[RMDB]
RNA sequence: GGGAACGACUCGAGUAGAGUCGAAAAUCUGGCCCUGCUGGCGGGCCUGUAUGUGGCUGCAUCGCCGUGGAUCGUCGGCUUCAGCGCCACCAGAGGGCUGCCAACGUGUGACCUUAUCGUGGGGAUCGAUAGCGCCAUGCUUCGGCAUGGCGCUAUCAAAAGAAACAACAACAACAAC
Reactivity to 2A3 in 0.01 (KOAc 150mM, MgCl2 10mM, bicine 150mM(pH8.5), 24C), signal-to-noise 1, nucleotides 027 to 126: u010c010u000g040g040c000c000c050u080g020c020u000g060g000c080g000g000g090c000c000u000g080u070a110u100g000u010g000g050c100u100g030c140a050u000c060g010c040c140g000u080g040g020a170u100c080g110u020c000g030g000c000u140u060c000a040g000c020g000c060c000a010c000c030a000g010a000g000g000g000c020u000g020c000c000a000a000c090g070u170g020u070g060a110c020c000u150u040a150u190c050g010u040g000g000g000g020a010u030c100